[RMDB]
RNA sequence: GGGAACGACUCGAGUAGAGUCGAAAAAUGGCGUUCGCGCCAUCAAAUUCCUAAGUCUUCAUGAGGCGUCUGACAUGAAGAGUGAUCGGAAACGAUCACCUUCAACAGCAGACGCUCCCCACCAUGAAGAUAUGGAUGCCUAUUGGUUCGCCAAUAACUAAUUACUCGGUUUCGACCGAGUAAUUAGAAAAGAAACAACAACAACAAC
Reactivity to DMS in 0.01 (KOAc 150mM, MgCl2 10mM, bicine 150mM(pH8.5), 24C), signal-to-noise 3, nucleotides 027 to 156: a020u010g020g030c020g010u000u010c300g040c010g000c000c020a050u000c020a090a070a170u000u010c000c000u000a140a260g010u000c020u000u030c000a020u020g000a300g020g010c010g000u000c000u000g020a080c090a300u000g020a010a000g000a190g050u000g020a010u010c000g010g010a200a100a250c000g030a020u000c000a000c000c020u000u000c010a040a070c060a170g000c000a020g010a020c000g000c020u000c150c100c000c040a300c260c000a070u000g010a030a020g020a050u000a240u010g000g000a030u000g000c020c010u000a100u000u000g010g010u010u010c070g020c050c030a040a060u000a080a250
Reactivity to 2A3 in 0.01 (KOAc 150mM, MgCl2 10mM, bicine 150mM(pH8.5), 24C), signal-to-noise 7, nucleotides 027 to 156: a000u010g000g010c030g020u080u090c300g010c000g020c140c000a000u010c010a000a100a040u110u020c010c000u030a130a050g020u000c000u000u000c000a000u000g020a010g020g020c010g000u000c000u010g040a170c010a100u040g010a000a000g180a110g020u000g000a000u000c000g010g070a090a040a060c020g000a000u000c000a000c000c000u000u000c010a060a060c040a040g060c000a000g000a000c000g000c000u020c000c000c000c000a020c000c000a000u000g000a000a010g000a010u020a020u040g010g000a010u040g030c010c020u060a050u020u040g050g020u040u080c180g040c100c000a030a020u100a090a060